RNA sequence: GGGAACGACUCGAGUAGAGUCGAAAAGCCGUAAAAGCAUCCGGCGAAUAAGAUGCAUGAGCGAAAGCUCUAAGAUAAUUGGCCGUUUAGUAGGGGCCGUAGAACCUACUUAUUAAUGCUCGAGAGGUGUGGAGCGAUCAUCACGCAAGACUAACAAAAUAAAUAAUAUCUUCGGAUAUUAUUUAUUAAAAGAAACAACAACAACAAC
Reactivity to DMS in 0.01 (KOAc 150mM, MgCl2 10mM, bicine 150mM(pH8.5), 24C), signal-to-noise 2, nucleotides 027 to 156: g010c020c010g000u000a040a060a070a120g020c010a050u000c020c020g020g000c000g000a070a030u000a050a060g000a120u000g000c070a180u010g000a030g050c040g020a220a150a260g010c000u010c000u010a080a140g000a200u000a100a150u000u000g010g050c030c010g000u010u010u010a030g000u010a030g030g000g020g050c030c140g040u010a050g030a070a120c000c030u010a030c030u000u010a130u000u010a030a050u000g030c030u020c010g000a100g000a030g020g020u010g070u000g000g000a100g010c040g030a050u000c030a070u000c050a070c040g000c010a040a140g000a300c010u000a050a090c050a040a040
Reactivity to 2A3 in 0.01 (KOAc 150mM, MgCl2 10mM, bicine 150mM(pH8.5), 24C), signal-to-noise 1, nucleotides 027 to 156: g020c000c000g020u020a060a030a040a130g000c000a000u010c000c040g120g000c040g040a080a080u140a110a020g000a010u010g010c000a050u130g020a000g020c010g050a090a000a020g000c000u000c020u010a080a000g010a130u090a130a150u230u050g020g000c000c010g010u060u060u080a010g000u000a000g000g000g000g040c020c030g040u070a060g040a010a010c000c000u000a000c020u000u020a000u030u110a040a050u100g020c010u020c040g040a090g000a010g060g120u070g020u060g050g060a020g010c020g000a010u080c040a020u050c000a050c070g000c020a040a030g050a140c050u110a170a010c110a060a270